[RMDB]
RNA sequence: GGGAACGACUCGAGUAGAGUCGAAAACAGUGGGGGAUAAGCUUCAUUGUCGAGAGGGAAACAACCCAGAUCAGCAGCUAAGGUGCCUAAAUAACGCUCAGUGGAAAGGAUGUGGGAUUACACAGACGACUCAUAAUAUAUUCGUAUAUUAUGAGUCAAAAGAAACAACAACAACAAC
Reactivity to DMS in 0.01 (KOAc 150mM, MgCl2 10mM, bicine 150mM(pH8.5), 24C), signal-to-noise 9, nucleotides 027 to 126: c080a060g030u010g000g000g000g010g010a110u020a070a130g010c040u010u000c060a060u010u000g020u000c060g010a090g010a100g010g000g000a100a070a090c180a090a100c040c020c020a060g000a060u010c060a070g000c070a080g000c060u000a060a100g010g010u010g010c030c030u010a050a070a070u020a070a110c110g010c030u000c050a060g020u010g000g000a070a070a090g000g010a060u010g010u010g000g000g010a120u010u010a070c130a070c130a090g010a160c170
Reactivity to 2A3 in 0.01 (KOAc 150mM, MgCl2 10mM, bicine 150mM(pH8.5), 24C), signal-to-noise 9, nucleotides 027 to 126: c030a020g020u050g000g030g010g000g020a080u070a170a030g040c010u050u030c020a080u030u090g050u080c060g020a030g010a070g090g030g000a070a070a040c040a030a050c030c010c000a020g020a060u040c010a010g040c010a000g000c020u060a090a030g040g020u040g020c000c010u110a150a110a060u140a080a020c050g010c020u020c030a030g020u050g070g040a100a050a040g040g010a040u070g020u060g050g010g010a040u060u160a070c110a010c010a040g100a070c060
Source information
An RNA of 177 nucleotides, treated with DMS and 2A3 and read out base by base. The reactions ran in a buffer of 150 mM KOAc, 10 mM MgCl2 and 150 mM bicine (pH 8.5), at 24 C. Values cover nucleotides 27 to 126. Source: RMDB libraries RFM100 and RFMREP, as collected in RNAgym.